Source information:
Structure probing data (2A3 and DMS) for a 177-nucleotide construct.
[RMDB]
RNA sequence: GGGAACGACUCGAGUAGAGUCGAAAAGAUAUGGAGAUUAAUAGCUAGCUCGUGGUCGGAAACGACCACCAGAGCUUGGACCUAUGAUCUCCUAAGUCAAAGCAGAAUUCGUUCGCGAAUUCUGCAACGCUUAAGACUACUUCGGUAGUCUUAAGCGAAAAGAAACAACAACAACAAC
Reactivity to 2A3 in 0.01 (KOAc 150mM, MgCl2 10mM, bicine 150mM(pH8.5), 24C), signal-to-noise 1, nucleotides 027 to 126: g030a000u030a010u110g050g010a040g000a000u000u110a240a170u180a060g000c070u050a000g000c040u020c050g000u000g010g020u000c000g070g000a010a000a020c040g000a010c020c000a010c030c030a090g010a010g020c010u030u160g020g020a020c010c000u000a000u030g020a000u020c000u020c030c010u010a090a030g040u000c030a100a000a170g000c020a000g000a030a020u000u040c020g000u040u170c300g000c010g180a000a000u010u010c010u000g000c000a000a000
Reactivity to DMS in 0.01 (KOAc 150mM, MgCl2 10mM, bicine 150mM(pH8.5), 24C), signal-to-noise 1, nucleotides 027 to 126: g000a050u000a300u000g000g010a040g020a040u000u000a090a030u000a010g000c080u000a010g010c000u000c040g010u010g020g030u010c000g010g000a040a070a180c010g030a020c010c010a010c100c300a070g050a030g000c030u000u000g040g000a060c300c000u010a020u000g000a000u010c000u000c020c000u020a040a030g000u000c020a130a070a130g020c000a010g000a020a010u000u010c010g000u000u010c220g030c000g000a000a010u000u000c000u010g020c000a010a030
Values cover nucleotides 27 to 126. The data come from the RNA Mapping Database (RMDB), library TTRDES. For 2A3, 2,189 sequencing reads were counted. Conditions: 150 mM KOAc, 10 mM MgCl2 and 150 mM bicine (pH 8.5), 24 C. 2A3 adducts were read by reverse transcription with SuperScript II with manganese.